An RNA of 177 nucleotides, treated with 2A3 and DMS and read out base by base. Values cover nucleotides 27 to 126. The DMS profile rests on 13,039 reads. DMS adducts were read by reverse transcription with MarathonRT. For 2A3, 5,382 sequencing reads were counted.
RNA sequence: GGGAACGACUCGAGUAGAGUCGAAAACUCAGAAUGAUAACACAGAGACCGGAGGAGGGCCAGUGCAGUAGGACUCCCACUGAGCUUGUUUAGCUUGUGUUAGCACUACGAGGUUACGAGUGGGACAAGGGUAACAUCAAUUCGUUGAUGUUACCCUAAAAGAAACAACAACAACAAC
Reactivity to 2A3 in 0.01 (KOAc 150mM, MgCl2 10mM, bicine 150mM(pH8.5), 24C), signal-to-noise 7, nucleotides 027 to 126: c020u020c010a040g120a090a110u150g060a070u080a130a030c040a010c020a050g050a040g030a150c020c040g030g020a030g020g030a020g000g020g000c000c010a020g020u030g050c020a020g020u130a030g060g050a050c010u020c020c010c000a010c030u040g010a010g030c020u050u090g050u130u210u150a030g020c030u070u040g050u040g030u150u080a020g020c030a000c050u050a030c050g020a020g010g060u040u040a050c070g020a030g030u020g010g020g010a020c040a040
Reactivity to DMS in 0.01 (KOAc 150mM, MgCl2 10mM, bicine 150mM(pH8.5), 24C), signal-to-noise 6, nucleotides 027 to 126: c000u010c010a120g010a110a080u010g010a100u020a040a050c050a050c060a090g010a080g000a050c070c070g010g010a110g000g000a130g000g010g000c050c050a050g010u010g000c080a070g010u020a060g020g010a240c120u000c010c020c010a040c050u020g010a070g000c040u000u000g000u010u020u060a090g000c040u000u020g010u010g010u020u010a020g020c060a130c090u000a050c030g000a040g010g000u030u030a080c100g000a050g010u010g000g000g000a060c220a080